[RMDB]
RNA sequence: GGGAACGACUCGAGUAGAGUCGAAAAAUGAAUUUGAAAAAGAAAUGUAGCUAUGUUUUGUCAAUGUAGCCAGCACCUCACUUUAGAGCUAAACUAAAUUGUGGAAAACCAUCAUGAGGUAUUAGGAAGUAGGUCUUACUGGUGACCAGAAAUAGCACAUGUGCAGGAUAUUCGUAUCCUGCACAUGAAAAGAAACAACAACAACAAC
Reactivity to DMS in 0.01 (KOAc 150mM, MgCl2 10mM, bicine 150mM(pH8.5), 24C), signal-to-noise 2, nucleotides 027 to 156: a130u010g000a080a070u000u000u000g020a100a090a100a150a100g020a100a110a080u000g020u000a060g000c000u000a040u000g000u000u000u000u010g010u010c100a100a100u000g040u010a140g000c000c010a070g020c040a040c060c010u000c060a050c050u000u000u000a120g010a190g000c030u000a050a060a100c040u000a050a090a100u000u000g020u010g000g000a030a070a100a160c030c010a020u000c150a080u000g010a180g020g000u020a070u000u020a070g000g010a020a040g030u010a030g030g020u000c060u080u000a140c020u010g020g000u000g000a120c060c010a110g000a040a030a070u000a010g010c000a140
Reactivity to 2A3 in 0.01 (KOAc 150mM, MgCl2 10mM, bicine 150mM(pH8.5), 24C), signal-to-noise 2, nucleotides 027 to 156: a020u040g050a050a070u120u150u210g090a060a070a020a050a030g090a030a120a050u080g030u100a030g030c010u010a020u060g080u040u080u130u030g100u080c050a070a050u080g040u100a040g040c000c000a000g020c010a040c000c000u030c050a040c020u020u040u090a120g030a030g110c030u040a010a000a000c010u020a090a080a040u040u050g020u050g010g010a060a160a100a180c020c010a020u100c010a020u060g020a040g000g060u040a300u020u030a010g010g040a050a000g010u050a010g000g000u000c050u080u150a050c020u040g010g040u050g020a030c010c050a000g040a000a070a010u040a040g000c010a000
Background: Structure probing data (DMS and 2A3) for a 207-nucleotide construct. It was measured as part of the RMDB library OK3TST.